An RNA of 207 nucleotides, treated with 2A3 and read out base by base. 2A3 adducts were read by reverse transcription with SuperScript II with manganese.

RNA sequence: GGGAACGACUCGAGUAGAGUCGAAAAUAAGAAAAAUAAACAAGUGGUUGUAGUCCGCCACUCUAAGGGGACGCCUUUAGAAGAAGAGGCUAGGUGGUAUUCCGGUGUGGGAUACUUGGUAAUAUGUAAGGGGAUGGUACGUUCGCGUACCAUCCAAGGAUGCAUUUACGUUCGCGUAAAUGCAUCCAAAAGAAACAACAACAACAAC
Reactivity to 2A3 in 0.01 (KOAc 150mM, MgCl2 10mM, bicine 150mM(pH8.5), 24C), signal-to-noise 1, nucleotides 027 to 156: u070a020a150g050a000a000a050a000a040u240a110a060a130c210a300a080g000u040g000g000u010u070g190u080a010g020u010c010c000g000c060c000a000c000u070c010u000a000a000g000g000g000g050a020c060g210c000c000u000u000u000a020g000a070a000g050a010a000g000a050g020g000c010u000a000g030g060u080g000g000u020a040u000u000c020c010g000g250u280g040u200g220g010g000a000u000a020c000u010u000g010g020u040a020a090u100a170u190g060u140a120a080g190g030g000g000a000u000g000g000u000a000c000g010u000u070c210g010c040g040u040a000c000c000a010u030c000c000a000a000